Chemical mapping of a 177-nucleotide RNA with 2A3 and DMS. As a SHAPE reagent, 2A3 marks flexible, mostly unpaired nucleotides at the ribose 2'-OH. The reactions ran in a buffer of 150 mM KOAc, 10 mM MgCl2 and 150 mM bicine (pH 8.5), at 24 C. It was measured as part of the RMDB library OK1LIB. 2A3 adducts were read by reverse transcription with SuperScript II with manganese.
RNA sequence: GGGAACGACUCGAGUAGAGUCGAAAAUUACAGCGACCCGCUCCGGUCUACAACAUGGCGGUGGCGUUGCGGCUGCGCGGGUAUCUCGAUACCGAGGCGUUGGGCGCGGCGGUCGCCGAUGUCGUGGCGGACGUUAAGUUUUCGAACUUAACGUCCGAAAAGAAACAACAACAACAAC
Reactivity to 2A3 in 0.01 (KOAc 150mM, MgCl2 10mM, bicine 150mM(pH8.5), 24C), signal-to-noise 4, nucleotides 027 to 126: u150u050a060c030a020g040c000g050a110c000c000c000g000c010u040c010c030g040g030u000c020u020a050c030a050a000c000a020u050g080g000c000g030g040u050g060g070c000g020u010u040g100c010g100g090c000u000g000c000g000c020g030g020g000u000a040u010c100u040c070g090a030u010a040c070c000g090a190g210g000c050g010u300u300g020g000g050c010g000c000g000g030c010g040g030u060c000g000c000c010g020a030u030g020u030c030g010u030g030g000
Reactivity to DMS in 0.01 (KOAc 150mM, MgCl2 10mM, bicine 150mM(pH8.5), 24C), signal-to-noise 2, nucleotides 027 to 126: u080u040a120c150a130g050c110g020a130c060c010c000g020c020u010c090c090g010g010u010c060u020a060c050a130a020c000a020u020g030g040c000g010g020u050g030g060c020g000u000u010g010c050g050g000c000u000g010c050g020c030g010g020g040u000a000u060c080u010c300g030a070u000a010c020c010g000a130g050g000c010g010u000u010g000g000g000c000g010c030g000g000c010g010g000u020c040g000c020c000g030a020u000g010u000c060g010u000g020g000